RNA sequence: GGGAACGACUCGAGUAGAGUCGAAAAGGGGUCAGAAUCUCUAGCGUGGAGGCGAUGAAAUAUGAUCAAGCGCUGAAGCCUCCACGGCGUGGUCAUAUGGAGCCUCUCGGGUUCUGACGGAGGCACCCAAAGAGGACACAAGUUCGCUUGUGUCCUCGAAAUCAGUUCGCUUCGGCGAACUGAUUUCAAAAGAAACAACAACAACAAC
Reactivity to 2A3 in 0.01 (KOAc 150mM, MgCl2 10mM, bicine 150mM(pH8.5), 24C), signal-to-noise 1, nucleotides 027 to 156: g080g010g020g030u010c000a000g020a000a020u000c050u100c070u300a160g150c040g200u300g060g010a000g010g000c020g040a130u110g060a120a040a020u080a010u000g020a020u040c110a160a210g290c050g000c060u110g040a020a020g010c000c000u070c000c020a020c010g000g000c070g020u090g010g000u000c010a000u000a030u100g050g020a020g000c000c060u000c040u030c000g010g010g000u000u000c000u000g000a000c010g000g010a000g010g000c000a040c040c010c020a030a160a000g010a000g000g000a000c000a000c000a000a000g060u130u220c300g040c240u010u010g000u000g000u000c000c000u000c000
Chemical mapping of a 207-nucleotide RNA with 2A3. For 2A3, 906 sequencing reads were counted. 2A3 adducts were read by reverse transcription with SuperScript II with manganese.